Chemical mapping of a 177-nucleotide RNA with 2A3 and DMS. For 2A3, 861 sequencing reads were counted. The RNA was probed in 150 mM KOAc, 10 mM MgCl2 and 150 mM bicine (pH 8.5) at 24 C. The data come from the RNA Mapping Database (RMDB), library VIROID. For DMS the reverse transcriptase was MarathonRT. For DMS, 1,760 sequencing reads were counted. Reactivities are rounded to 0.1 and cut off at 0 and 3.
[RMDB]
RNA sequence: GGGAACGACUCGAGUAGAGUCGAAAAAGGUUAAUUAUCCUCAUGGAUUACUUCUGGUAACCAGGAGUUUGUAGCGACGUAAGUUUCGUCCUAAAAGGACUCAUCAGGUAGCCUAAUAGACUACGACCAUAAUGGUUCCGUUCGCGGAACCAUUAUGAAAAGAAACAACAACAACAAC
Reactivity to 2A3 in 0.01 (KOAc 150mM, MgCl2 10mM, bicine 150mM(pH8.5), 24C), signal-to-noise 1, nucleotides 027 to 126: a000g070g000u060u040a100a080u170u130a040u120c010c010u080c060a100u110g010g010a070u040u060a020c010u050u120c010u110g060g030u150a070a150c070c000a000g000g010a010g010u040u040u050g130u080a080g040c110g100a060c070g030u080a080a190g060u020u200u080c000g030u050c060c050u070a140a120a010a020g100g000a040c010u000c090a060u050c010a030g080g000u030a010g020c030c000u080a110a100u060a060g050a030c020u020a020c070g050a040c000
Reactivity to DMS in 0.01 (KOAc 150mM, MgCl2 10mM, bicine 150mM(pH8.5), 24C), signal-to-noise 3, nucleotides 027 to 126: a060g020g000u010u000a060a070u000u000a150u010c030c010u000c120a300u000g010g010a110u000u000a020c010u000u020c120u020g000g010u010a100a060c060c010a050g010g010a030g000u000u000u010g010u010a040g030c130g000a020c020g030u000a090a190g010u020u010u010c030g010u010c000c020u000a040a080a050a170g000g010a010c030u000c030a090u000c090a070g000g010u000a020g010c010c000u010a100a110u000a100g010a050c030u010a020c020g010a090c140